Background:
The record gives the reactivity of an RNA of 177 nucleotides to 2A3 and DMS. DMS adducts were read by reverse transcription with MarathonRT. 2A3 adducts were read by reverse transcription with SuperScript II with manganese. The 2A3 profile rests on 1,304 reads.

[RMDB]
RNA sequence: GGGAACGACUCGAGUAGAGUCGAAAACAACAUGUAACACGCAACCCGUAGCUGGUGCCGAGAAUAUAACCACUCUCAGUCAUGAUACCAGGCAGGGUAGUGACGAAGUUACUUCAGCGCUGCUAGGCCUCAUACCGCUUUUCGAAGCGGUAUGAGGAAAAGAAACAACAACAACAAC
Reactivity to 2A3 in 0.01 (KOAc 150mM, MgCl2 10mM, bicine 150mM(pH8.5), 24C), signal-to-noise 2, nucleotides 027 to 126: c010a010a000c010a110u220g050u050a020a040c000a030c030g010c030a050a060c000c000c030g000u050a050g050c050u030g060g000u020g040c030c030g030a020g070a080a000u200a030u040a180a030c100c040a050c000u000c000u000c040a020g080u030c030a120u190g090a030u050a030c020c000a010g090g070c050a000g040g050g000u000a000g020u030g090a030c030g050a170a040g000u020u050a050c000u080u120c050a030g030c140g000c130u130g020c020u070a030g080g090
Reactivity to DMS in 0.01 (KOAc 150mM, MgCl2 10mM, bicine 150mM(pH8.5), 24C), signal-to-noise 2, nucleotides 027 to 126: c040a060a120c130a050u030g020u000a040a050c040a210c090g000c010a060a020c020c000c000g000u020a070g010c010u000g020g040u010g000c080c040g000a030g000a050a020u010a130u000a130a110c150c190a080c170u000c020u010c010a040g010u000c150a070u000g010a170u010a030c000c000a070g010g050c050a150g000g000g000u020a070g000u000g000a070c100g020a060a100g020u000u000a040c030u020u000c090a050g010c020g000c050u000g000c010u000a120g010g000